[RMDB]
Chemical mapping of a 177-nucleotide RNA with 2A3 and DMS. Source: RMDB library TTRDEL, as collected in RNAgym. For 2A3, 3,636 sequencing reads were counted. DMS adducts were read by reverse transcription with MarathonRT. The RNA was probed in 150 mM KOAc, 10 mM MgCl2 and 150 mM bicine (pH 8.5) at 24 C. For 2A3 the reverse transcriptase was SuperScript II with manganese.

RNA sequence: GGGAACGACUCGAGUAGAGUCGAAAAGAUAUGGAUUCUCAUGAAGCGAACUACAGUGACCAUCGGAAACGAUGGUUCACUGCGGGUGAGAAUCCUAAGUCAAAAGCAUUGGGUUCGCCCAAUGCAAGAUUGAACGGAUGUUCGCAUCCGUUCAAUCAAAAGAAACAACAACAACAAC
Reactivity to 2A3 in 0.01 (KOAc 150mM, MgCl2 10mM, bicine 150mM(pH8.5), 24C), signal-to-noise 2, nucleotides 027 to 126: g000a000u030a000u040g000g010a000u000u040c010u020c020a020u100g130a270a170g240c100g110a170a190c160u190a120c270a000g000u000g010a010c010c010a010u000c010g020g000a020a000a000c000g000a010u010g010g020u020u040c010a000c000u010g000c020g010g030g000u000g000a000g000a030a000u000c010c010u000a030a000g010u010c020a000a040a110a060g000c000a010u020u000g040g000g080u010u140c300g170c060c000c040a000a000u000g040c000a000a010
Reactivity to DMS in 0.01 (KOAc 150mM, MgCl2 10mM, bicine 150mM(pH8.5), 24C), signal-to-noise 2, nucleotides 027 to 126: g000a020u000a210u010g010g000a050u000u000c000u010c010a020u010g030a120a160g000c090g040a070a040c020u020a300c030a000g000u000g010a040c010c000a000u000c010g000g040a080a060a070c000g000a010u000g000g030u000u010c000a000c000u000g020c110g020g020g000u010g000a010g030a030a020u000c010c000u000a000a090g020u010c030a070a100a150a120g000c000a000u000u000g000g010g020u010u010c220g020c000c000c000a000a000u000g000c010a040a020

Background:
High DMS reactivity at an A or C suggests that its Watson-Crick edge is free.